[RMDB]
RNA sequence: GGGAACGACUCGAGUAGAGUCGAAAACAAGCGCCCCGCCUAGCUUAAAUGAGCUUCGCAAGGACGCCAGAAGGAGAAAGUGGCGUGACAAUUGCAGUGGUUGCAGUGCCAUUGUGACUUCCAAAGGGCAUUGAAGUGCUUUCGAGCACUUCAAUGCAAAAGAAACAACAACAACAAC
Reactivity to DMS in 0.01 (KOAc 150mM, MgCl2 10mM, bicine 150mM(pH8.5), 24C), signal-to-noise 1, nucleotides 027 to 126: c110a160a160g000c100g020c000c010c020c110g000c000c040u000a010g000c000u000u000a050a160a170u000g000a010g000c000u000u000c090g000c050a040a100g040g000a020c020g000c000c060a120g010a070a090g020g000a040g020a090a030a090g000u020g020g010c090g010u000g000a090c080a070a050u000u000g010c080a050g000u030g020g020u000u000g020c070a100g040u000g000c020c020a030u000u000g020u000g010a080c040u000u010c010c040a010a080a140g000g000
Reactivity to 2A3 in 0.01 (KOAc 150mM, MgCl2 10mM, bicine 150mM(pH8.5), 24C), signal-to-noise 1, nucleotides 027 to 126: c000a010a000g010c000g120c010c000c000c000g000c000c010u040a020g000c000u090u050a110a240a090u300g010a010g000c000u110u020c010g000c040a080a080g020g010a000c000g010c000c020a040g050a090a050g200g070a030g070a070a130a030g060u030g030g000c040g010u060g030a030c050a080a060u070u120g000c050a010g050u050g100g140u130u080g040c040a040g030u040g110c010c010a020u040u030g000u010g060a080c050u080u000c020c020a040a040a050g170g010
Conditions: 150 mM KOAc, 10 mM MgCl2 and 150 mM bicine (pH 8.5), 24 C. Chemical mapping of a 177-nucleotide RNA with DMS and 2A3. Reactivities are rounded to 0.1 and cut off at 0 and 3. It was measured as part of the RMDB library OK2TST.